[RMDB]
RNA sequence: GGGAACGACUCGAGUAGAGUCGAAAAGAGACUGAUGCUAGAGGAACACUAAGUCUAGUAGACAAGGUUAUAGCUGUAGACCAGCUAACAUCAUCAUCUAGUGACGAACCGCAAGACUACGAAGAUCUUGCCCUAGCGCUUGCGGAUACAGAGGAACUCUUAAUAUGGGAUUCGUCCCAUAUUAAGAAAAAGAAACAACAACAACAAC
Reactivity to DMS in 0.01 (KOAc 150mM, MgCl2 10mM, bicine 150mM(pH8.5), 24C), signal-to-noise 5, nucleotides 027 to 156: g010a100g040a100c050u000g020a080u010g020c000u000a040g020a130g040g010a090a120c080a090c070u010a040a280g010u010c010u000a150g020u000a160g010a090c020a070a190g010g020u000u000a080u000a050g020c000u000g030u010a180g010a160c160c020a050g010c020u000a030a100c080a080u000c040a100u000c030a040u000c060u000a090g030u000g010a090c060g010a070a130c020c000g000c010a010a020g000a090c030u000a220c050g010a110a150g010a100u000c060u010u000g000c030c000c020u000a090g010c030g000c030u000u000g030c010g030g010a210u010a060c070a110g000a100g000g000a080a090c130
Reactivity to 2A3 in 0.01 (KOAc 150mM, MgCl2 10mM, bicine 150mM(pH8.5), 24C), signal-to-noise 9, nucleotides 027 to 156: g070a000g020a020c070u080g030a060u120g030c010u020a000g010a040g050g070a120a040c070a030c130u080a130a040g030u010c020u030a080g100u130a040g050a030c030a060a050g030g010u080u080a080u060a110g000c000u010g030u100a050g110a210c080c010a010g000c010u040a020a050c020a080u120c000a010u010c000a020u010c030u040a030g040u040g090a050c080g060a050a040c000c000g000c010a010a010g010a030c040u070a040c170g090a070a030g060a120u070c060u060u160g050c000c000c010u040a050g030c050g010c170u000u010g010c000g010g010a030u060a050c070a010g060a070g040g060a040a040c010
This 207-nucleotide RNA was probed chemically with DMS and 2A3.
2A3 adducts were read by reverse transcription with SuperScript II with manganese.
DMS adducts were read by reverse transcription with MarathonRT.